[RMDB]
Notes:
Chemical mapping of a 177-nucleotide RNA with 2A3. 2A3 adducts were read by reverse transcription with SuperScript II with manganese. It was measured as part of the RMDB library OK1LIB.
RNA sequence: GGGAACGACUCGAGUAGAGUCGAAAAGUGCGGAGACCGGUUCAGAGAUUCCUGUCUACCGUACAUAUAUUGCAACGACUAAACCCUUGUUCCGGCUAUAAAGAUGGAACAUUAGUCUUAUUUAGGGCCUCCAGCGGGAUUUCGAUCCCGCUGGAGGAAAAGAAACAACAACAACAAC
Reactivity to 2A3 in 0.01 (KOAc 150mM, MgCl2 10mM, bicine 150mM(pH8.5), 24C), signal-to-noise 1, nucleotides 027 to 126: g000u000g000c010g000g000a000g000a000c000c000g000g000u040u060c060a140g090a020g020a300u130u000c020c000u010g000u040c000u070a300c050c000g000u000a000c000a000u040a000u060a000u010u210g100c060a000a000c010g040a000c010u010a000a000a060c020c000c000u050u000g000u000u000c000c000g010g000c010u020a050u040a200a300a000g010a120u050g040g000a000a000c000a000u000u000a000g000u000c000u060u150a300u080u180u140a130g000g080g000